This 207-nucleotide RNA was probed chemically with 2A3 and DMS. In probing experiments dimethyl sulfate is read out at A N1 and C N3, which are open when not base-paired. The reactions ran in a buffer of 150 mM KOAc, 10 mM MgCl2 and 150 mM bicine (pH 8.5), at 24 C. The DMS profile rests on 4,063 reads.
[RMDB]
RNA sequence: GGGAACGACUCGAGUAGAGUCGAAAAAGUUAGGUUCGCUAUGGUGCAACUCUUUAAGGCAAUAACGAACUAAUUCUAAGCAAGUAAUGGAGAAAUGGCAGGGUCACUAUCUAGCCAUAAUAGUGCUGUAAGUGACUUAGAUUCGUCUAAGUCACAACCUAACACUACGGUUCGCCGUAGUGUUAGGAAAAGAAACAACAACAACAAC
Reactivity to 2A3 in 0.01 (KOAc 150mM, MgCl2 10mM, bicine 150mM(pH8.5), 24C), signal-to-noise 5, nucleotides 027 to 156: a000g080u060u050a050g010g070u020u020c000g000c020u010a020u060g220g100u080g060c070a160a170c100u130c130u220u220u230a130a070g040g010c000a050a030u030a070a030c030g010a000a000c000u020a010a030u040u030c060u110a070a060g030c030a050a030g040u090a090a060u090g100g020a040g050a070a130a060u080g040g000c040a030g080g000g000u060c020a010c090u030a020u080c030u050a040g000c000c000a010u030a050a050u020a030g040u020g030c060u040g050u180a210a070g000u010g000a000c000u000u000a010g000a000u020u040c150g020u020c150u010a000a000g000u010c000a000c000a000a000
Reactivity to DMS in 0.01 (KOAc 150mM, MgCl2 10mM, bicine 150mM(pH8.5), 24C), signal-to-noise 2, nucleotides 027 to 156: a070g010u010u000a070g010g010u000u010c010g000c020u000a020u000g000g060u020g020c010a100a160c130u010c130u010u000u010a080a130g030g030c040a100a030u000a010a020c020g000a030a040c020u010a020a090u010u010c050u020a100a100g020c040a080a100g020u000a080a070u010g000g000a080g050a070a020a080u000g010g020c000a270g000g000g000u010c060a050c090u010a040u010c020u000a070g020c010c020a090u020a030a070u000a080g020u000g010c000u000g030u010a050a120g000u000g010a030c000u000u000a010g010a050u000u010c300g020u000c020u000a010a010g030u010c000a010c000a020a090